[RMDB]
RNA sequence: GGGAACGACUCGAGUAGAGUCGAAAAGUCGUGCGUAGAGUUAACGUGCCCUACGUGUGUCUCCUAGCUAAUAAAGAGCAAGAAGCUAUUUUGAUGUCUGAAGACGUUAAGUUAAACCCUUCAGAAGCCUUAUUAUCCCGUUCGCGGGAUAAUAAGGAAAAGAAACAACAACAACAAC
Reactivity to DMS in 0.01 (KOAc 150mM, MgCl2 10mM, bicine 150mM(pH8.5), 24C), signal-to-noise 2, nucleotides 027 to 126: g000u000c020g040u000g020c020g020u010a020g000a040g010u000u010a040a150c240g020u000g000c040c000c000u000a010c020g040u000g020u020g000u000c000u000c010c050u000a090g020c090u000a050a120u010a080a110a100g010a050g030c070a090a060g000a100a090g010c050u000a060u000u000u000u000g020a110u020g000u000c010u020g010a030a010g020a080c200g000u000u000a030a090g010u000u000a090a050a050c040c070c000u000u000c010a020g000a020a110g000
Reactivity to 2A3 in 0.01 (KOAc 150mM, MgCl2 10mM, bicine 150mM(pH8.5), 24C), signal-to-noise 2, nucleotides 027 to 126: g020u000c000g020u000g010c020g000u000a000g040a020g040u040u060a120a050c140g060u080g030c000c020c000u020a000c000g020u040g010u000g000u000c030u010c060c010u020a020g040c020u040a070a030u110a160a280a040g120a010g030c020a030a040g090a070a000g070c030u030a130u080u090u090u140g090a040u080g050u080c010u010g000a020a010g010a020c050g010u020u020a030a020g000u010u060a090a070a060c020c000c010u040u010c000a000g020a080a000g040
Source: RMDB library 15KREP, as collected in RNAgym. Chemical mapping of a 177-nucleotide RNA with DMS and 2A3. The RNA was probed in 150 mM KOAc, 10 mM MgCl2 and 150 mM bicine (pH 8.5) at 24 C. 2A3 is a SHAPE reagent: it acylates the 2'-hydroxyl of flexible nucleotides of all four kinds. 2A3 adducts were read by reverse transcription with SuperScript II with manganese. Reactivities are given for positions 27 through 126.